An RNA of 177 nucleotides, treated with DMS and 2A3 and read out base by base. For 2A3 the reverse transcriptase was SuperScript II with manganese. Reactivities are given for positions 27 through 126.
[RMDB]
RNA sequence: GGGAACGACUCGAGUAGAGUCGAAAAAAUACUUUACUGUAUUGUAUUGAUCUAUUUGACUUGAGGUCUUUUUGAGGAGGAGCUUUGCUUCUGCUAAGUAUCAAGCUUCUCCCAAGCAGCCUCAGACUGAUAGAAUUCCGUUCGCGGAAUUCUAUCAAAAAGAAACAACAACAACAAC
Reactivity to DMS in 0.01 (KOAc 150mM, MgCl2 10mM, bicine 150mM(pH8.5), 24C), signal-to-noise 2, nucleotides 027 to 126: a020a000u000a000c000u000u020u070a180c080u010g010u010a020u000u010g000u020a140u010u000g000a250u020c030u010a060u010u000u020g010a100c120u020u000g020a020g000g010u090c020u000u000u000u000u000g000a150g020g030a030g000g020a010g020c000u010u010u000g010c000u000u000c290u010g030c170u070a030a010g010u000a010u020c180a010a000g000c000u000u000c010u030c000c010c000a000a010g000c170a060g000c000c000u000c000a010g000a080c100
Reactivity to 2A3 in 0.01 (KOAc 150mM, MgCl2 10mM, bicine 150mM(pH8.5), 24C), signal-to-noise 3, nucleotides 027 to 126: a010a000u070a020c030u110u160u060a150c160u140g090u110a030u150u030g040u010a050u050u130g080a100u050c010u070a190u100u120u200g110a110c030u020u070g000a000g040g100u300c000u030u080u020u000u010g150a180g000g020a000g000g000a000g000c000u020u020u030g000c000u010u070c040u170g160c070u050a040a020g010u010a040u270c060a000a000g040c000u000u000c020u010c000c000c000a010a000g010c010a000g010c000c010u000c000a000g030a000c060
The data come from the RNA Mapping Database (RMDB), libraries RFM100 and RFMREP. The reactions ran in a buffer of 150 mM KOAc, 10 mM MgCl2 and 150 mM bicine (pH 8.5), at 24 C. For 2A3, 821 sequencing reads were counted. DMS adducts were read by reverse transcription with MarathonRT.